[RMDB]
The record gives the reactivity of an RNA of 177 nucleotides to 2A3 and DMS. It was measured as part of the RMDB library OK1LIB.

RNA sequence: GGGAACGACUCGAGUAGAGUCGAAAAUGAUCUAAUAAGCUCGGUAUGACAUGUGUAUCAUUUUGUAAAUGAAACGUUUGGAUAAGUGGUAGUAACAUGUGGGAUACGUCACUCUCAUCAUAGCCAACCUAUCUCGGGCAUUCGUGCCCGAGAUAGGAAAAGAAACAACAACAACAAC
Reactivity to 2A3 in 0.01 (KOAc 150mM, MgCl2 10mM, bicine 150mM(pH8.5), 24C), signal-to-noise 2, nucleotides 027 to 126: u070g010a020u000c000u040a070a030u070a200a000g040c060u000c060g060g000u140a110u110g050a060c020a030u090g050u010g010u040a100u030c000a000u010u000u020u140g170u170a000a030a060u140g120a120a040a070c090g070u000u160u110g140g080a120u000a120a030g030u030g000g030u040a020g110u050a060a000c000a000u090g000u050g010g000g050a000u040a110c000g050u010c000a020c000u030c000u010c050a110u110c000a080u110a010g050c000c050a010a050
Reactivity to DMS in 0.01 (KOAc 150mM, MgCl2 10mM, bicine 150mM(pH8.5), 24C), signal-to-noise 1, nucleotides 027 to 126: u010g010a130u000c040u020a050a060u030a030a130g000c000u000c040g030g050u000a040u020g000a070c040a000u030g040u000g010u000a000u000c000a030u000u000u000u030g000u030a040a000a080u010g000a090a040a100c200g000u000u000u000g000g010a090u010a060a050g010u030g000g000u000a000g020u010a050a040c080a020u000g000u000g000g000g000a160u000a000c020g020u000c160a100c050u010c030u000c040a080u000c030a000u030a090g000c000c080a000a140
DMS adducts were read by reverse transcription with MarathonRT.